[RMDB]
This 177-nucleotide RNA was probed chemically with 2A3 and DMS. For 2A3 the reverse transcriptase was SuperScript II with manganese. DMS adducts were read by reverse transcription with MarathonRT. The reactions ran in a buffer of 150 mM KOAc, 10 mM MgCl2 and 150 mM bicine (pH 8.5), at 24 C. The 2A3 profile rests on 1,341 reads.
RNA sequence: GGGAACGACUCGAGUAGAGUCGAAAAAACUUCAGCAUAAUCAACGUGCUUAGCCCAAACUCCGGAAGCACUGAUGAUGACUGUUCGCUCUCGCAUCGCAGUCGGCGUCAUCGUUGGCUGCUUCAAACGACGGUCAUUUAUUCGUAAAUGACCGUCGAAAAGAAACAACAACAACAAC
Reactivity to 2A3 in 0.01 (KOAc 150mM, MgCl2 10mM, bicine 150mM(pH8.5), 24C), signal-to-noise 2, nucleotides 027 to 126: a000a000c070u100u070c010a010g050c000a010u050a090a140u300c070a060a130c070g020u020g020c010u070u080a060g020c000c000c000a050a100a080c080u100c090c040g110g020a000a000g000c000a010c030u000g040a000u010g000a000u010g000a010c000u080g100u300u190c030g010c040u070c000u030c060g060c120a300u150c110g000c060a030g030u020c000g000g020c000g060u030c010a050u060c000g000u020u000g010g070c120u030g020c000u010u000c030a000a030a020
Reactivity to DMS in 0.01 (KOAc 150mM, MgCl2 10mM, bicine 150mM(pH8.5), 24C), signal-to-noise 2, nucleotides 027 to 126: a000a020c150u040u010c210a050g010c010a020u000a080a130u030c200a040a190c260g010u000g000c030u000u000a070g020c000c000c040a060a060a150c230u060c120c110g010g010a010a020g020c020a040c000u000g030a030u000g000a000u000g000a020c010u030g050u010u000c070g010c050u000c010u000c120g040c230a050u000c300g030c050a020g000u000c000g020g010c010g010u000c030a070u000c030g010u000u010g000g000c270u000g000c000u000u000c040a010a070a150